[RMDB]
RNA sequence: GGGAACGACUCGAGUAGAGUCGAAAAGAUAUGGAGUACCCAGCUAGUCUUAGCGUUGAAAUCGGAAACGAUGGAGCUAAGGUGGGGCUGGUACUCCUAAGUCAAAAGGCACGGUUCGCCGUGCCAAGCUAUAGCUUGGGUUCGCCCAAGCUAUAGCAAAAGAAACAACAACAACAAC
Reactivity to 2A3 in 0.01 (KOAc 150mM, MgCl2 10mM, bicine 150mM(pH8.5), 24C), signal-to-noise 2, nucleotides 027 to 126: g020a000u070a050u150g000g000a020g000u030a000c130c170c030a020g010c000u010a040g030u020c010u010u010a000g000c010g300u270u090g020a050a020a000u020c000g020g000a100a040a030c000g010a010u020g040g020a030g010c010u010a000a010g050g000u020g050g300g020g020c000u000g010g000u000a000c000u000c000c000u000a030a010g020u000c010a000a000a050a300g000g000c000a010c000g020g040u040u110c300g020c090c010g010u000g020c010c000a000a010
Reactivity to DMS in 0.01 (KOAc 150mM, MgCl2 10mM, bicine 150mM(pH8.5), 24C), signal-to-noise 3, nucleotides 027 to 126: g000a030u000a300u000g000g000a020g000u010a010c160c020c060a010g000c030u000a300g010u000c020u010u000a010g010c000g020u000u010g000a070a120a020u010c000g000g000a120a100a190c010g000a000u010g000g000a100g020c010u000a000a000g000g000u000g030g000g000g000c000u010g020g000u000a000c020u000c000c000u000a000a040g000u010c050a090a050a080a130g000g010c000a010c010g000g000u000u010c280g010c010c000g000u000g010c000c000a010a030

Notes
This 177-nucleotide RNA was probed chemically with 2A3 and DMS. The data come from the RNA Mapping Database (RMDB), library TTRDEL. Conditions: 150 mM KOAc, 10 mM MgCl2 and 150 mM bicine (pH 8.5), 24 C. For 2A3, 4,939 sequencing reads were counted. 2A3 adducts were read by reverse transcription with SuperScript II with manganese.